[RMDB]
Notes
The record gives the reactivity of an RNA of 207 nucleotides to DMS and 2A3. The 2A3 profile rests on 1,976 reads. It was measured as part of the RMDB library ARCHII.
RNA sequence: GGGAACGACUCGAGUAGAGUCGAAAAUUGGCAGCUUCUGUAACUCACGCUUCUGUGAGGUCUGAUUGUGGGAUGGCCUGAGGCUGGGAUCUACUGCGUAGCGGACCAGCUCAUGUUGACGGAACGUCCGCACUAAGCUUGCCAUCAAUAUGGGUGCCGACAGACAUAAGUUCGCUUAUGUCUGUCGAAAAGAAACAACAACAACAAC
Reactivity to DMS in 0.01 (KOAc 150mM, MgCl2 10mM, bicine 150mM(pH8.5), 24C), signal-to-noise 2, nucleotides 027 to 156: u000u000g020g020c030a070g010c030u000u000c040u010g040u010a070a070c020u020c020a020c050g040c190u010u000c140u000g010u000g000a020g050g010u000c050u000g010a160u000u010g040u000g060g020g000a070u020g010g010c000c020u020g030a300g000g010c000u000g030g030g000a140u000c010u000a060c030u010g020c170g030u000a090g040c030g010g000a200c010c020a050g010c020u000c020a070u010g010u010u000g020a170c060g020g050a050a090c050g030u010c010c010g030c060a080c100u010a070a090g020c010u020u000g080c010c010a030u000c040a040a180u010a060u000g020g020g020u000g050c070
Reactivity to 2A3 in 0.01 (KOAc 150mM, MgCl2 10mM, bicine 150mM(pH8.5), 24C), signal-to-noise 4, nucleotides 027 to 156: u040u010g000g000c010a000g000c020u070u000c050u120g130u090a150a150c000u020c000a010c020g150c080u190u190c080u290g040u050g030a030g010g010u020c030u050g100a220u190u110g010u050g040g010g000a010u030g030g030c000c000u020g010a060g070g000c000u000g000g010g030a070u010c010u040a050c010u060g120c060g110u010a020g000c000g030g050a040c000c000a010g000c000u030c030a050u110g090u150u090g050a030c090g000g040a120a070c050g010u000c000c020g040c020a000c050u020a010a000g010c020u080u110g040c030c000a000u030c020a000a010u140a100u180g090g000g000u050g010c020